The record gives the reactivity of an RNA of 207 nucleotides to 2A3. Source: RMDB library OK3TST, as collected in RNAgym. Conditions: 150 mM KOAc, 10 mM MgCl2 and 150 mM bicine (pH 8.5), 24 C.
RNA sequence: GGGAACGACUCGAGUAGAGUCGAAAACUACAUUCAAGUAUAUGCUAGAAUCUUGGAAAGAUAUGCACCUUGUUCUAUAAAAAACUUAGGAGGACGGGGUCUACUUCUUAUACCAUUAGAAUUAGUUUUAGAGAUCCCUUCUUCGGGUGCAACUCAACCACUCUGUUACUUUCGAGUAACAGAGUGGAAAAGAAACAACAACAACAAC
Reactivity to 2A3 in 0.01 (KOAc 150mM, MgCl2 10mM, bicine 150mM(pH8.5), 24C), signal-to-noise 1, nucleotides 027 to 156: c030u080a050c010a080u050u070c010a010a000g020u010a110u060a080u260g040c010u080a080g070a240a170u050c020u030u000g020g070a150a070a000g060a060u270a020u180g000c000a000c010c010u030u040g010u070u040c170u050a160u220a170a040a040a040a100a050c020u040u130a060g060g000a000g000g000a000c010g000g000g020g000u000c000u060a090c020u060u050c010u020u080a090u070a180c010c030a110u110u170a030g080a180a050u170u060a020g020u030u090u060u160a050g020a020g000a000u020c000c000c000u000u030c000u050u020c000g000g000g010u000g000c010a020a020c000u010c030a000a100